The record gives the reactivity of an RNA of 177 nucleotides to DMS and 2A3. Source: RMDB library OK1LIB, as collected in RNAgym. Conditions: 150 mM KOAc, 10 mM MgCl2 and 150 mM bicine (pH 8.5), 24 C.

RNA sequence: GGGAACGACUCGAGUAGAGUCGAAAAGAAGAGAAAGGAGACACACGGACAGUCUCCAGAGGUUCCUAAGGACUCGAUCGCGCCUGCCGGGAAUCAUGGACUCCCGGUUGUCCAUGAAAGAAGAAGACCAGCUACCCAUAUUCGUAUGGGUAGCUGGAAAAGAAACAACAACAACAAC
Reactivity to DMS in 0.01 (KOAc 150mM, MgCl2 10mM, bicine 150mM(pH8.5), 24C), signal-to-noise 1, nucleotides 027 to 126: g000a110a070g000a050g000a110a140a150g030g000a020g000a080c000a050c230a050c100g000g050a140c130a210g000u010c000u010c000c020a130g000a150g020g000u020u000c000c000u000a020a140g000g000a010c000u000c030g020a030u000c020g000c300g010c020c000u000g030c020c000g030g000g030a050a080u010c000a170u050g000g000a050c030u040c030c000c010g000g000u000u100g000u000c010c000a100u020g020a100a150a040g110a100a110g000a050a000g000a190
Reactivity to 2A3 in 0.01 (KOAc 150mM, MgCl2 10mM, bicine 150mM(pH8.5), 24C), signal-to-noise 1, nucleotides 027 to 126: g110a030a000g210a010g000a080a130a060g000g030a000g000a000c090a000c100a050c180g090g110a000c000a020g000u000c000u000c010c000a000g010a000g060g000u000u050c030c000u050a130a100g020g000a010c000u000c010g000a000u000c100g000c000g000c050c000u010g090c000c000g000g000g000a020a000u050c080a150u150g000g030a000c000u000c000c050c000g000g010u090u090g040u000c010c020a020u140g160a010a080a100g220a050a000g090a040a010g080a040